Structure probing data (DMS and 2A3) for a 207-nucleotide construct. The reactions ran in a buffer of 150 mM KOAc, 10 mM MgCl2 and 150 mM bicine (pH 8.5), at 24 C.

RNA sequence: GGGAACGACUCGAGUAGAGUCGAAAAGAAAGAGCCUGAAUACGGAGAACCGUAACGCAUGACCGAAUAUUCAGCCCAGUUCACGACGUAAGUCGUGCGCCCGAGUCUCCGUCUGGGCGCUGGGGUCACGUACAUGCGUCAGGCAGGAUGGAGAGAAGCAUUAAUACGUGUUCGCACGUAUUAAUGCAAAAGAAACAACAACAACAAC
Reactivity to DMS in 0.01 (KOAc 150mM, MgCl2 10mM, bicine 150mM(pH8.5), 24C), signal-to-noise 1, nucleotides 027 to 156: g000a080a090a160g010a080g040c000c000u000g000a110a120u000a030c030g020g020a140g040a130a240c030c050g000u000a010a180c010g010c020a020u000g030a130c030c020g000a100a160u000a140u030u000c070a220g000c000c000c020a060g020u010u000c010a020c000g030a010c030g020u020a150a240g020u030c010g040u000g000c020g030c010c010c000g000a070g010u000c020u030c050c020g030u000c050u000g030g010g030c030g000c030u000g000g030g020g020u000c010a100c140g050u000a110c020a070u000g010c010g060u000c000a030g000g000c000a010g000g000a100u000g010g030a140g010a090g000a140a300
Reactivity to 2A3 in 0.01 (KOAc 150mM, MgCl2 10mM, bicine 150mM(pH8.5), 24C), signal-to-noise 3, nucleotides 027 to 156: g110a000a070a040g090a040g020c010c000u010g040a070a030u040a030c010g040g000a150g150a300a240c020c010g020u020a020a000c010g000c000a000u010g020a040c050c040g090a150a060u180a170u280u150c090a090g070c000c000c000a020g040u130u160c020a000c010g010a000c010g070u160a120a060g000u010c000g000u010g030c030g010c000c010c010g040a010g090u010c000u000c010c010g000u020c010u040g000g020g000c000g000c000u010g010g000g020g000u130c070a030c130g060u110a120c000a000u010g000c000g010u020c000a000g010g000c000a010g070g020a040u030g000g000a010g000a010g040a080a020

For DMS, 2,010 sequencing reads were counted. The 2A3 profile rests on 1,793 reads. It was measured as part of the RMDB library OK3TST. DMS adducts were read by reverse transcription with MarathonRT. Reactivities are given for positions 27 through 156.